[RMDB]
RNA sequence: GGGAACGACUCGAGUAGAGUCGAAAACAGACCUUCCAUAACGAACUCGGGUACGGAAAGCCCAGUCGUGAACUCGACUCCGUUGAAGAUGAGGGUUAGUUCCGGACACGUACGCUUUGAGGCGAUCGCGAAUUCCAGGUAGUCACGGUACCGUUCACAUAACCUGCCGGUUCGCCGGCAGGUUAUGAAAAGAAACAACAACAACAAC
Reactivity to 2A3 in 0.01 (KOAc 150mM, MgCl2 10mM, bicine 150mM(pH8.5), 24C), signal-to-noise 1, nucleotides 027 to 156: c040a070g110a010c010c010u120u000c000c070a080u110a120a100c150g000a110a050c020u150c220g000g010g040u080a110c050g050g050a030a010a000g090c100c040c070a000g040u070c050g060u100g080a010a000c030u030c110g010a000c020u000c080c000g020u030u150g100a140a090g020a120u130g030a140g000g000g060u040u010a020g000u070u030c010c000g020g000a000c020a020c000g100u060a030c090g060c080u210u080u140g060a000g000g050c030g040a150u080c010g020c010g130a010a010u200u000c070c010a040g170g000u070a150g020u070c050a000c140g020g010u040a080c120c000g040u080u220c070a040